[RMDB]
RNA sequence: GGGAACGACUCGAGUAGAGUCGAAAAGGGCCGCCCUGAAGCGCGGCCCGGAUGGCCUGGCCCAGGGCCCGGAGGCACGCCAGAUGUAUGCGCGCGGUAAAGGCGACCUCGGCGGCGAUGUCAAAGGAUACCGGACGUGAUUCGUCACGUCCGGUAUAAAAGAAACAACAACAACAAC
Reactivity to DMS in 0.01 (KOAc 150mM, MgCl2 10mM, bicine 150mM(pH8.5), 24C), signal-to-noise 1, nucleotides 027 to 126: g000g130g000c000c020g000c040c040c110u040g000a200a180g000c230g100c080g000g000c000c000c000g000g000a010u000g040g000c050c000u000g000g000c020c030c000a200g020g000g000c010c000c020g000g020a300g000g000c120a010c080g000c050c040a070g000a280u000g000u030a180u010g010c040g060c000g000c070g000g010u040a040a110a300g010g000c060g000a170c040c000u020c000g000g010c080g020g070c000g010a030u000g020u010c040a050a180a100g000g020
Reactivity to 2A3 in 0.01 (KOAc 150mM, MgCl2 10mM, bicine 150mM(pH8.5), 24C), signal-to-noise 1, nucleotides 027 to 126: g000g000g000c010c020g040c040c040c110u270g240a170a060g000c080g000c000g040g000c000c000c000g000g000a000u000g070g000c030c000u040g000g010c020c000c080a070g000g000g080c000c000c000g020g000a030g000g000c110a020c040g000c020c020a060g010a200u060g090u230a060u140g070c160g000c010g000c100g000g100u300a210a170a040g050g030c000g030a010c000c000u020c000g030g020c030g010g000c020g110a130u010g070u150c070a160a000a000g030g030
Source: RMDB library OK1LIB, as collected in RNAgym. The record gives the reactivity of an RNA of 177 nucleotides to DMS and 2A3. For DMS the reverse transcriptase was MarathonRT. For DMS, 1,043 sequencing reads were counted. For 2A3 the reverse transcriptase was SuperScript II with manganese.